[RMDB]
RNA sequence: GGGAACGACUCGAGUAGAGUCGAAAAGCCGGCGUAGAAGUCGAAGGUGCCGUAGUUCAUGGUGAUCAGCACCCCGGCCAGGGCGGCCAUCGCCGCGCCGAUGACGAACACGUAGGAGAUCACCCGAACGUGCAUUAAUGUUCGCAUUAAUGCACGUAAAAGAAACAACAACAACAAC
Reactivity to 2A3 in 0.01 (KOAc 150mM, MgCl2 10mM, bicine 150mM(pH8.5), 24C), signal-to-noise 2, nucleotides 027 to 126: g060c020c000g040g000c000g000u040a050g010a300a030g030u020c030g050a070a020g050g040u040g010c050c040g100u100a070g060u070u150c120a100u190g060g000u030g020a110u070c040a020g060c020a120c000c000c000c020g050g000c000c030a070g080g010g020c010g030g000c070c010a130u150c050g010c010c010g000c010g000c000c000g020a060u130g010a010c020g010a070a010c040a000c050g020u040a030g000g070a060g000a040u110c050a050c030c020c030g030a060
Reactivity to DMS in 0.01 (KOAc 150mM, MgCl2 10mM, bicine 150mM(pH8.5), 24C), signal-to-noise 6, nucleotides 027 to 126: g020c030c010g020g040c010g000u000a050g000a220a270g020u000c010g010a080a240g000g020u000g010c010c050g030u010a130g020u000u010c150a100u000g000g020u000g010a050u000c070a100g010c040a130c020c020c080c020g010g020c140c110a130g000g010g000c040g000g000c070c150a050u000c050g010c000c050g010c040g010c000c000g000a160u010g010a050c030g000a110a160c140a040c040g020u000a090g010g010a080g000a060u000c100a070c010c010c060g020a090
Chemical mapping of a 177-nucleotide RNA with 2A3 and DMS.
For DMS the reverse transcriptase was MarathonRT.
Reactivities are given for positions 27 through 126.